RNA sequence: GGGAACGACUCGAGUAGAGUCGAAAAAGAGCACAUGGAGAAAAAGGGAAUUCACGUAGAACAAGUAAUACCAAGAGGAGUAAAUGACGAAAUGGCACAAAGAUUCGUAAACUUUGACUAUAACGCAAUUAAAAUGCUCAUUCGUGAGCAUUUUAAUAAAAGAAACAACAACAACAAC
Reactivity to DMS in 0.01 (KOAc 150mM, MgCl2 10mM, bicine 150mM(pH8.5), 24C), signal-to-noise 6, nucleotides 027 to 126: a090g010a080g020c040a040c060a060u010g010g010a090g010a040a060a080a110a090g000g010g000a080a070u010u000c060a060c120g010u000a050g000a060a060c120a070a100g000u000a040a060u010a080c060c020a030a060g010a080g000g010a090g010u010a030a060a070u000g000a070c060g010a030a090a030u000g010g000c050a090c070a030a030a050g000a080u010u000c190g000u000a080a070a040c040u000u000u010g010a150c060u010a050u010a050a150c120g010c130a080
Reactivity to 2A3 in 0.01 (KOAc 150mM, MgCl2 10mM, bicine 150mM(pH8.5), 24C), signal-to-noise 3, nucleotides 027 to 126: a000g100a010g010c050a010c020a060u080g030g030a060g030a030a050a020a050a040g030g000g010a030a040u080u030c040a020c110g010u070a080g020a110a020c030a090a000g040u060a040a060u050a100c000c030a060a000g000a020g090g020a020g010u040a020a100a130u140g030a010c010g010a020a040a060u080g030g000c040a000c010a180a050a000g030a060u120u080c070g090u120a020a030a080c020u020u040u060g020a020c040u050a030u050a250a020c020g010c010a000